Chemical mapping of a 207-nucleotide RNA with DMS and 2A3. 2A3 adducts were read by reverse transcription with SuperScript II with manganese. DMS adducts were read by reverse transcription with MarathonRT. The reactions ran in a buffer of 150 mM KOAc, 10 mM MgCl2 and 150 mM bicine (pH 8.5), at 24 C.
[RMDB]
RNA sequence: GGGAACGACUCGAGUAGAGUCGAAAAAUAUCGGCUGGUUUGGCUAAAUUAGGCCGGCAAAAGCUAGCCAGACAAGAUUAAAUAGACGGAUAAUCCUGUAGUAGAUCCUGGGUCACCUUUUCUGGACGGGGAGUUCGACCCUCCCCCGUCUCCACCACAGUUACAUUCACUUCGGUGAAUGUAACUGAAAAGAAACAACAACAACAAC
Reactivity to DMS in 0.01 (KOAc 150mM, MgCl2 10mM, bicine 150mM(pH8.5), 24C), signal-to-noise 1, nucleotides 027 to 156: a030u000a030u020c060g010g080c000u000g000g030u000u000u000g030g010c000u000a040a050a170u010u010a160g000g000c000c010g060g000c070a050a110a110a040g000c010u000a060g060c000c010a100g020a060c080a040a080g000a080u000u000a030a100a120u000a130g020a100c060g000g010a130u000a060a130u000c000c020u000g010u000a160g020u010a090g000a030u000c030c000u000g020g040g010u010c030a060c060c030u000u000u000u000c030u000g000g020a070c020g010g020g000g000a090g000u000u000c090g010a150c100c100c030u010c010c000c000c000c030g020u000c010u000c060c030a080c020c050a190
Reactivity to 2A3 in 0.01 (KOAc 150mM, MgCl2 10mM, bicine 150mM(pH8.5), 24C), signal-to-noise 1, nucleotides 027 to 156: a010u150a060u030c010g010g010c030u030g020g100u040u050u110g010g000c000u020a000a090a200u130u120a130g000g020c020c010g010g000c020a090a130a000a000g000c000u020a000g000c000c000a000g000a000c030a050a000g030a030u070u110a040a030a030u040a030g030a010c030g030g010a010u050a070a010u050c000c040u000g020u090a030g040u000a000g040a030u000c000c000u010g020g000g000u010c020a040c000c020u040u030u050u080c040u030g000g000a000c000g000g000g000g000a030g000u040u080c100g040a090c010c000c000u010c040c000c000c010c000g030u000c000u000c010c020a060c060c000a030